RNA sequence: GGGAACGACUCGAGUAGAGUCGAAAACAUGGAGUGCUCGGGCCUCGGAGCCUCCUACAACAACAACAACUUUCGAGGCCGUUAAUGGGCGAAAGCCCUAGGAGUCGUGGCGGCGUGCACGCUCCGUAUGACUUAAUGUAUUACACGCCGGAUACAAAUCGGCAGGAUAUUUCGAUAUCCUGCCGAUAAAAGAAACAACAACAACAAC
Reactivity to 2A3 in 0.01 (KOAc 150mM, MgCl2 10mM, bicine 150mM(pH8.5), 24C), signal-to-noise 1, nucleotides 027 to 156: c020a040u030g000g000a020g000u140g000c000u000c020g000g020g010c080c000u000c000g000g000a000g010c000c000u010c000c000u060a090c080a180a000c000a010a010c000a020a000c000a070a010c060u130u250u220c090g000a000g000g000c020c000g000u000u060a040a020u020g020g000g000c000g050a080a030a020g000c000c000c000u000a070g040g000a020g020u300c040g000u070g010g010c000g000g010c000g020u000g000c000a000c000g000c000u000c010c000g010u080a100u130g100a020c040u040u060a060a020u260g100u190a150u100u130a030c000a000c000g000c000c000g000g000a070u100a050c050a000a100